[RMDB]
RNA sequence: GGGAACGACUCGAGUAGAGUCGAAAAGCUUGUAAGGGACUGGUUUUGUGAAUAUGUAUGGCAAAACACUAGUUUUGAUGCUUCACAGUGAAGUGCUGUUAACUAAUUUACACUUACUCUAACAGGUUAGUGCAAAGUGAGCUAUAUAGAGAGAGAAACUCGACGGACUAUUCGUAGUCCGUCGAGUAAAAGAAACAACAACAACAAC
Reactivity to 2A3 in 0.01 (KOAc 150mM, MgCl2 10mM, bicine 150mM(pH8.5), 24C), signal-to-noise 1, nucleotides 027 to 156: g040c040u080u120g050u060a040a090g000g000g020a010c060u060g050g060u050u020u040u130g050u040g070a230a090u140a050u190g040u080a040u050g080g020c050a070a020a040a030c100a050c070u100a080g050u000u000u060u160g020a020u100g000c000u030u060c060a050c010a050g050u160g130a110a000g040u050g110c040u010g000u070u040a010a040c020u010a000a160u100u090u060a020c000a000c020u010u060a010c010u020c000u140a110a000c000a070g000g020u020u000a000g020u010g040c090a090a100a110g010u050g020a010g050c000u000a000u000a000u070a160g100a010g020a000g000a000g000a090a030